Annotation: The data come from the RNA Mapping Database (RMDB), library OK2TRN. An RNA of 177 nucleotides, treated with 2A3 and DMS and read out base by base.
[RMDB]
RNA sequence: GGGAACGACUCGAGUAGAGUCGAAAACGUUGCUCAUCCGUCUCCGGGCACUCUAGGCCCCGCUUCUCGCUAUACACGCGUAUAGCAUCGUGGCAGGAUAUGCCCUCGGCCACGGCUAUGACGGCCGCAUAACGACCUUGUUCGCAAGGUCGUUAUGAAAAGAAACAACAACAACAAC
Reactivity to 2A3 in 0.01 (KOAc 150mM, MgCl2 10mM, bicine 150mM(pH8.5), 24C), signal-to-noise 4, nucleotides 027 to 126: c020g060u050u130g040c030u030c080a110u070c030c020g060u020c020u020c040c000g000g010g000c030a020c050u060c040u070a100g150g000c020c010c000c000g000c010u150u070c060u060c070g000c010u020a010u020a050c090a030c180g210c090g040u010a010u000a020g010c010a050u070c040g010u030g000g000c020a000g050g000a040u070a100u240g020c020c000c010u030c040g040g000c010c000a050c010g020g010c010u070a070u130g070a050c060g040g010c020c020g010
Reactivity to DMS in 0.01 (KOAc 150mM, MgCl2 10mM, bicine 150mM(pH8.5), 24C), signal-to-noise 8, nucleotides 027 to 126: c110g010u000u000g010c060u010c060a070u010c030c030g010u000c030u000c060c060g010g000g010c020a060c210u000c060u000a110g010g010c020c010c020c030g010c180u010u010c080u000c120g010c010u000a020u000a030c030a120c300g010c210g000u000a010u000a010g010c010a050u000c050g010u000g000g020c020a150g010g000a120u000a100u010g010c040c000c030u010c080g020g000c030c030a070c030g000g000c150u010a040u010g010a090c090g010g000c070c080g000